Source: RMDB library M2RFPK, as collected in RNAgym. An RNA of 207 nucleotides, treated with DMS and 2A3 and read out base by base. The reactions ran in a buffer of 150 mM KOAc, 10 mM MgCl2 and 150 mM bicine (pH 8.5), at 24 C. For DMS, 2,762 sequencing reads were counted. For 2A3 the reverse transcriptase was SuperScript II with manganese. For DMS the reverse transcriptase was MarathonRT.

[RMDB]
RNA sequence: GGGAACGACUCGAGUAGAGUCGAAAAGCUGAAAAUGAUUUAUGGGUAGUGGAAUACGUUAACCGUAAGACCUUUGGUUGAAAAACUAUGAAAUUAAGCCUCAGAUAUUUUAUCUUUGGUUACGGGAAAAAUCAUUUACCGUUCGCGGUAAAUGAAAGUAUCAUAGAGUGUUCGCACUCUAUGAUACAAAAGAAACAACAACAACAAC
Reactivity to DMS in 0.01 (KOAc 150mM, MgCl2 10mM, bicine 150mM(pH8.5), 24C), signal-to-noise 1, nucleotides 027 to 156: g040c040u000g020a050a040a090a120u000g010a120u000u000u000a050u030g010g000g010u000a030g010u010g000g000a170a130u010a080c000g020u000u010a100a050c010c020g010u000a040a130g000a050c010c020u000u020u010g010g020u000u010g010a080a080a090a100a080c080u000a120u010g010a120a090a090u010u000a120a130g010c020c030u000c100a040g020a130u000a020u010u010u000u000a040u000c010u020u000u000g000g020u000u000a040c050g000g010g000a020a030a070a130a150u000c010a000u000u000u000a010c000c000g020u000u000c300g030c010g040g010u000a000a000a020u010g010a000a020a030
Reactivity to 2A3 in 0.01 (KOAc 150mM, MgCl2 10mM, bicine 150mM(pH8.5), 24C), signal-to-noise 3, nucleotides 027 to 156: g020c030u020g020a030a030a090a080u110g030a070u070u130u220a130u120g040g000g010u060a070g060u060g060g060a110a040u110a100c040g020u080u100a100a030c030c000g000u000a030a010g050a080c010c000u080u110u080g030g000u030u050g010a090a050a020a030a030c060u090a130u180g040a090a140a040u090u060a100a020g020c000c010u010c010a010g010a050u020a110u080u230u150u080a020u040c000u000u010u060g000g000u050u040a020c040g000g060g000a010a030a000a000a150u030c000a010u000u000u000a000c010c000g000u010u030c230g000c000g020g020u000a000a000a000u020g000a000a010a000